Chemical mapping of a 177-nucleotide RNA with DMS and 2A3. 2A3 adducts were read by reverse transcription with SuperScript II with manganese. Values cover nucleotides 27 to 126.
RNA sequence: GGGAACGACUCGAGUAGAGUCGAAAAGAUAUGGAUGCAUACACGCAACAGCAGGUGUGUCGGAAACGACACCCUGACAUGCGUGUGCAUCCUAAGUCAAACCGAAAUGGCUUCGGCCAUUUCGGAAGUUUAGACGGAGGUUCGCCUCCGUCUAAACAAAAGAAACAACAACAACAAC
Reactivity to DMS in 0.01 (KOAc 150mM, MgCl2 10mM, bicine 150mM(pH8.5), 24C), signal-to-noise 2, nucleotides 027 to 126: g030a040u030a160u000g000g000a000u000g010c000a090u030a170c060a010c020g030c000a090a090c300a150g010c000a000g010g010u020g050u000g000u000c000g000g000a030a030a110c000g020a010c000a000c000c000c000u010g000a020c090a120u020g010c000g000u000g020u000g000c000a000u000c000c010u010a000a060g010u000c020a120a130a220c020c000g010a010a010a010u000g020g010c000u000u010c230g020g000c020c010a010u000u020u000c000g000g000a030a020
Reactivity to 2A3 in 0.01 (KOAc 150mM, MgCl2 10mM, bicine 150mM(pH8.5), 24C), signal-to-noise 2, nucleotides 027 to 126: g000a010u020a000u050g000g060a000u010g000c000a040u130a270c060a020c030g030c060a290a300c130a300g020c000a000g000g000u100g000u000g000u170c000g020g020a010a010a010c000g000a000c000a000c000c010c020u020g040a040c000a040u300g000c010g000u020g000u000g000c010a000u000c000c000u000a030a010g010u000c000a030a070a180c010c000g000a020a000a010u010g000g010c030u090u080c300g210g000c010c000a000u000u000u000c000g000g010a020a000

Record summary:
It was measured as part of the RMDB library TTRDES. Conditions: 150 mM KOAc, 10 mM MgCl2 and 150 mM bicine (pH 8.5), 24 C.